[RMDB]
RNA sequence: GGGAACGACUCGAGUAGAGUCGAAAAGGAGCAGGAGGCACCUCCAGCCGGGCCUGCAUUACAGCCACAGCUGGCGCCUGCUGCCCUGAGCUGGGCCGUGCCAGACCCGGCAGCUGCCGCGCAGCUGAGGGGUAUGGCUAUUCGUAGCCAUACCCCUAAAAGAAACAACAACAACAAC
Reactivity to DMS in 0.01 (KOAc 150mM, MgCl2 10mM, bicine 150mM(pH8.5), 24C), signal-to-noise 9, nucleotides 027 to 126: g010g000a100g010c020a030g010g010a160g000g010c020a070c110c100u000c060c050a090g010c010c030g020g010g010c070c040u010g000c090a140u010u010a090c120a120g000c020c030a190c030a050g000c030u000g010g010c300g010c080c040u000g000c020u000g000c010c000c050u000g000a100g010c010u000g000g000g010c060c170g010u000g010c050c020a080g000a070c010c030c040g000g000c010a020g000c010u000g010c100c100g010c130g010c010a020g010c010u000g000
Reactivity to 2A3 in 0.01 (KOAc 150mM, MgCl2 10mM, bicine 150mM(pH8.5), 24C), signal-to-noise 6, nucleotides 027 to 126: g070g010a100g020c020a010g010g090a030g030g010c030a090c050c070u040c030c020a010g010c010c010g040g100g030c010c030u030g020c030a020u070u240a080c060a040g040c020c020a170c010a090g010c020u060g080g000c020g020c010c010u080g030c020u010g000c010c000c010u050g020a060g010c010u010g000g040g000c180c080g100u110g090c010c010a020g010a100c010c010c000g020g020c010a000g000c000u020g020c050c070g080c040g010c030a000g000c000u030g040
Structure probing data (DMS and 2A3) for a 177-nucleotide construct.
For 2A3, 16,534 sequencing reads were counted.
The data come from the RNA Mapping Database (RMDB), library OK2TRN.
For DMS the reverse transcriptase was MarathonRT.